[RMDB]
RNA sequence: GGGAACGACUCGAGUAGAGUCGAAAACGCUGUCUUGCACGUUAUGUGGAGAGAAAUUUGUUCCCCGCCGCGAAGCCAACACCGGUCACGCCAGUACUAGACAGAAAACCGGUUACAGCCACCACUCCCCACCCUCCCGAUUCGUCGGGAGGGUGGGAAAAGAAACAACAACAACAAC
Reactivity to 2A3 in 0.01 (KOAc 150mM, MgCl2 10mM, bicine 150mM(pH8.5), 24C), signal-to-noise 1, nucleotides 027 to 126: c040g000c070u090g010u090c050u070u250g000c010a090c060g190u250u200a150u300g000u040g000g050a010g000a000g120a030a220a090u090u060u220g030u000u080c000c000c000c000g000c020c010g010c000g060a120a000g030c000c000a060a020c090a070c020c000g010g020u070c090a090c090g020c060c000a000g000u000a000c050u000a050g060a060c030a000g050a000a040a000a000c050c000g000g060u000u000a040c000a010g000c000c000a000c010c010a040c020u050c040